[RMDB]
RNA sequence: GGGAACGACUCGAGUAGAGUCGAAAAAUGGUAGUUAGUCUACUCGCUAUCUUAGUUACUUUGGAGUAAUCUAAAGUGUGUGUAAACGGGCGAAAGUCUGUAAAAUACUGGGGACAUAGGGUCAACAAGAACUAGUAGACCUUCGGGUCUACUAGAAACUAUGUUACCGUUUCGACGGUAACAUAGUAAAAGAAACAACAACAACAAC
Reactivity to DMS in 0.01 (KOAc 150mM, MgCl2 10mM, bicine 150mM(pH8.5), 24C), signal-to-noise 3, nucleotides 027 to 156: a130u010g010g000u000a020g040u000u000a130g010u000c010u000a030c020u000c040g020c050u000a070u000c030u000u000a120g010u000u000a040c020u000u000u000g020g000a060g020u000a090a130u000c020u000a030a040a040g040u000g010u000g010u000g030u000a080a150a080c000g000g010g000c000g030a130a070a160g010u000c020u000g030u010a030a060a070a130u000a080c050u000g020g020g000g010a060c050a110u000a030g020g010g000u000c060a050a080c050a050a090g000a070a180c000u000a020g010u000a020g000a020c000c010u010u010c300g040g050g020u000c000u000a010c020u000a000g000a020a060
Reactivity to 2A3 in 0.01 (KOAc 150mM, MgCl2 10mM, bicine 150mM(pH8.5), 24C), signal-to-noise 4, nucleotides 027 to 156: a000u060g020g000u020a020g010u080u050a020g050u050c040u060a060c000u060c020g000c020u040a050u080c000u070u110a060g030u090u090a040c010u020u020u070g060g020a040g040u090a100a110u030c010u040a000a050a050g010u020g010u010g000u000g020u060a100a070a060c040g010g020g010c040g040a060a010a010g020u000c020u030g080u070a050a090a010a010u150a070c060u050g020g000g010g000a010c020a030u130a040g080g000g020u060c010a040a010c020a070a070g070a070a040c000u010a000g000u000a000g000a000c000c000u010u020c100g050g000g000u000c000u000a000c000u000a000g010a000a000